[RMDB]
RNA sequence: GGGAACGACUCGAGUAGAGUCGAAAAAGAUGACCAAUACCAAUUGUCGGAUAUCCUUCAGUAUCCCAAUAAACUUUUAGUCUUAAUCCUUCAUCACGGCGAAGCAUUUCAGCCAUUGACAUAUUUGGAUUAUCAUCAGUUGGAAUCUCUGAUAGUGCGAUACAGCUUUCUUCGGAAAGCUGUAUCGAAAAGAAACAACAACAACAAC
Reactivity to 2A3 in 0.01 (KOAc 150mM, MgCl2 10mM, bicine 150mM(pH8.5), 24C), signal-to-noise 2, nucleotides 027 to 156: a040g100a060u150g030a020c020c010a020a050u100a080c010c030a030a020u140u050g030u070c020g000g020a000u000a060u080c030c000u050u070c010a010g010u030a040u070c110c000c020a090a140u140a140a040a050c070u050u140u110u190a030g010u020c010u080u010a030a050u000c000c050u060u110c060a040u050c040a010c110g030g020c020g010a040a000g060c100a150u080u070u110c050a020g010c020c000a020u030u130g040a050c020a050u200a080u060u090u120g050g000a010u030u040a020u100c040a010u000c030a020g000u030u020g040g040a040a040u000c020u000c010u070g020a080u110a100g200u210g150
Conditions: 150 mM KOAc, 10 mM MgCl2 and 150 mM bicine (pH 8.5), 24 C. An RNA of 207 nucleotides, treated with 2A3 and read out base by base. Reactivities are rounded to 0.1 and cut off at 0 and 3. For 2A3 the reverse transcriptase was SuperScript II with manganese. Source: RMDB library OK3TST, as collected in RNAgym.